RNA sequence: GGGAACGACUCGAGUAGAGUCGAAAAAUAAGUUUGGCAAAGCUCGUGUCUAUUAUGAGAGCAUGUCUUACCAGGAGCAAGAUGAACUUUUUGCCAUGACAAAGCGUAACGUCAUUCCUACCAUGACCCUACUAAAACGGUUCGCCGUUUUAGUAGGAAAAGAAACAACAACAACAAC
Reactivity to DMS in 0.01 (KOAc 150mM, MgCl2 10mM, bicine 150mM(pH8.5), 24C), signal-to-noise 2, nucleotides 027 to 126: a100u010a090a050g010u000u000u000g000g000c000a070a190a140g000c020u000c010g000u000g040u000c070u010a070u010u000a090u020g020a110g000a040g010c070a120u000g000u000c010u010u000a070c080c040a130g020g000a160g010c050a040a050g000a000u000g000a070a070c170u000u020u000u000u000g000c050c040a050u010g000a050c030a050a070a120g000c050g000u030a120a090c090g020u000c010a130u000u000c010c000u000a130c200c120a110u000g010a090c190
Reactivity to 2A3 in 0.01 (KOAc 150mM, MgCl2 10mM, bicine 150mM(pH8.5), 24C), signal-to-noise 3, nucleotides 027 to 126: a000u180a070a020g050u010u030u030g010g000c000a000a020a080g000c020u000c020g070u090g040u000c060u030a180u210u080a080u200g110a040g000a010g070c040a020u040g000u020c000u010u020a060c030c040a040g000g090a050g020c000a020a020g020a050u060g030a070a110c030u010u030u020u050u070g010c030c040a080u040g010a010c000a000a080a010g050c040g050u060a030a050c030g000u040c020a010u020u030c010c010u020a070c030c010a060u090g080a080c020
Chemical mapping of a 177-nucleotide RNA with DMS and 2A3. The data come from the RNA Mapping Database (RMDB), library 15KREP. DMS (dimethyl sulfate) methylates the pairing face of unpaired adenines and cytosines. The 2A3 profile rests on 3,165 reads. The reactions ran in a buffer of 150 mM KOAc, 10 mM MgCl2 and 150 mM bicine (pH 8.5), at 24 C. The DMS profile rests on 1,296 reads.